[RMDB]
RNA sequence: GGGAACGACUCGAGUAGAGUCGAAAAGAUAUGGAUGAUUAUAAGUGAUCAUGGUCGGAAACGACCAUCGAUCUUAAUAAUAAGAAUAAUAUCCUAAGUCAAACACCUAGCCUUCGGGCUAGGUGAAUCCUAUAUUUAAGUUCGCUUAAAUAUAGGAAAAAGAAACAACAACAACAAC
Reactivity to DMS in 0.01 (KOAc 150mM, MgCl2 10mM, bicine 150mM(pH8.5), 24C), signal-to-noise 2, nucleotides 027 to 126: g000a020u000a100u000g000g000a020u000g020a040u000u000a000u010a070a180g030u000g010a020u010c010a010u000g000g020u000c000g010g010a040a020a080c000g000a020c000c000a000u000c080g010a010u000c000u010u000a110a080u010a080a090u000a100a140g000a210a060u000a070a060u000a030u000c000c010u000a020a130g010u010c030a200a080a230c000a010c000c010u010a000g000c010c000u000u000c280g020g030g030c000u000a000g000g010u000g000a030a040
Reactivity to 2A3 in 0.01 (KOAc 150mM, MgCl2 10mM, bicine 150mM(pH8.5), 24C), signal-to-noise 1, nucleotides 027 to 126: g010a010u010a030u020g010g010a010u070g040a020u110u070a030u020a260a210g200u170g120a000u010c030a000u000g000g030u010c000g010g020a040a000a000c000g010a000c000c000a000u000c000g000a000u030c000u000u040a020a000u100a090a020u070a000a050g030a100a170u140a150a040u070a020u220c000c000u020a040a000g000u000c030a150a070a030c010a050c010c000u010a000g010c000c020u060u100c300g110g000g000c010u000a000g000g000u000g030a000a000